[RMDB]
RNA sequence: GGGAACGACUCGAGUAGAGUCGAAAAGACGCCUGUGUGGCGAAACGAGCAAUGGCAUAAGCCGCAAUAGAAGAUGAGAUGGAAGCGGCAAGAUAGAAUGCUCGCAAGAAGAUCCAUCUCACAGAGAAGCUACUACUAGCUUCGGCUAGUAGUAGCUAAAAGAAACAACAACAACAAC
Reactivity to 2A3 in 0.01 (KOAc 150mM, MgCl2 10mM, bicine 150mM(pH8.5), 24C), signal-to-noise 2, nucleotides 027 to 126: g090a000c050g070c010c020u200g140u070g010u180g140g000c000g010a070a150a040c010g000a000g060c030a070a080u130g090g030c020a030u100a130a060g000c020c010g000c020a040a100u070a100g130a190a000g060a200u040g000a000g000a000u000g010g010a160a060g000c000g010g010c020a000a000g080a000u060a010g070a100a000u010g010c020u070c120g010c030a030a000g120a040a000g000a100u000c000c000a000u010c000u040c010a000c010a010g090a000g020a020
Reactivity to DMS in 0.01 (KOAc 150mM, MgCl2 10mM, bicine 150mM(pH8.5), 24C), signal-to-noise 2, nucleotides 027 to 126: g000a250c000g010c000c000u020g070u020g000u000g000g000c000g020a040a110a110c110g040a050g000c030a020a080u000g020g010c130a100u020a090a080g000c000c000g010c010a160a130u050a080g060a100a110g000a150u000g020a040g010a010u000g000g000a040a110g000c000g010g000c000a000a080g000a150u070a020g000a030a100u000g000c000u010c000g000c080a160a040g020a170a110g010a190u020c000c000a020u000c000u000c000a000c150a050g000a140g000a130

Chemical mapping of a 177-nucleotide RNA with 2A3 and DMS. Conditions: 150 mM KOAc, 10 mM MgCl2 and 150 mM bicine (pH 8.5), 24 C. For DMS, 2,078 sequencing reads were counted. Reactivities are given for positions 27 through 126.